[RMDB]
RNA sequence: GGGAACGACUCGAGUAGAGUCGAAAAUACACGAACAUGACUCCCUUCAAUGCAAACUCUCGCCUGUAUGAUCCCGAUUACCGGUAAAGGGCUCCUGGUCAUGAUUCGAACCAGAGCAUAGCUUAGGAGAGAGGGUACACUUCGGUGUACCCUCUCUAAAAGAAACAACAACAACAAC
Reactivity to 2A3 in 0.01 (KOAc 150mM, MgCl2 10mM, bicine 150mM(pH8.5), 24C), signal-to-noise 2, nucleotides 027 to 126: u250a040c100a020c030g080a040a000c020a060u100g020a050c060u080c000c000c000u110u140c090a100a090u090g070c080a080a000a060c000u000c000u000c030g010c000c000u000g020u000a030u080g070a160u160c010c010c010g000a070u040u050a050c000c040g010g010u060a080a010a040g000g010g000c010u080c010c050u020g060g010u040c030a040u050g150a300u070u130c070g000a030a010c010c020a010g000a000g040c000a100u120a090g020c000u030u050a040g010g010
Reactivity to DMS in 0.01 (KOAc 150mM, MgCl2 10mM, bicine 150mM(pH8.5), 24C), signal-to-noise 1, nucleotides 027 to 126: u110a100c040a130c010g010a040a040c080a030u000g000a030c030u000c030c000c020u000u030c080a040a020u060g000c070a040a080a300c090u000c000u000c080g050c010c000u000g000u000a000u040g000a120u000c000c000c010g050a010u030u000a000c050c060g020g040u000a000a010a030g000g030g000c140u030c030c070u000g000g020u000c030a060u070g040a050u080u030c060g000a080a080c030c030a090g000a000g060c010a080u030a070g000c000u000u000a170g000g050